[RMDB]
Structure probing data (2A3 and DMS) for a 177-nucleotide construct. Conditions: 150 mM KOAc, 10 mM MgCl2 and 150 mM bicine (pH 8.5), 24 C. For DMS the reverse transcriptase was MarathonRT. 2A3 is a SHAPE reagent: it acylates the 2'-hydroxyl of flexible nucleotides of all four kinds.

RNA sequence: GGGAACGACUCGAGUAGAGUCGAAAAACAGGUCUACGGACCUGAGUGCCCUGCCUCUGAUGAAGCCUGUGUUGGUAGGGACAUCUGACAGUAAUGAUGAAUGCCAACCGCUCUGAUGGUGGCACAAACUAUUGAUAAGUUUCGACUUAUCAAUAGUAAAAGAAACAACAACAACAAC
Reactivity to 2A3 in 0.01 (KOAc 150mM, MgCl2 10mM, bicine 150mM(pH8.5), 24C), signal-to-noise 9, nucleotides 027 to 126: a000c000a010g000g000u000c010u030a050c260g100g000a000c000c000u000g000a010g050u130g050c010c000c000u010g010c010c000u020c020u040g040a060u040g060a100a050g040c050c130u150g040u030g020u120u020g020g010u010a040g060g080g040a010c000a010u010c030u080g120a100c080a170g160u280a180a130u190g050a010u020g020a060a040u040g000c010c000a030a050c020c010g010c010u040c040u060g070a080u070g030g150u050g020g040c000a000c000a010a070
Reactivity to DMS in 0.01 (KOAc 150mM, MgCl2 10mM, bicine 150mM(pH8.5), 24C), signal-to-noise 9, nucleotides 027 to 126: a120c000a000g000g000u000c000u010a090c200g040g000a010c000c000u000g000a040g010u000g010c010c000c010u010g010c020c010u000c020u000g000a150u010g000a070a060g010c050c200u020g030u010g010u000u000g010g010u000a040g010g010g020a130c010a010u000c010u000g010a200c210a120g010u020a090a130u010g000a030u000g010a150a080u000g000c000c000a010a020c010c010g000c030u000c050u000g000a140u010g000g000u010g010g020c000a030c170a040a080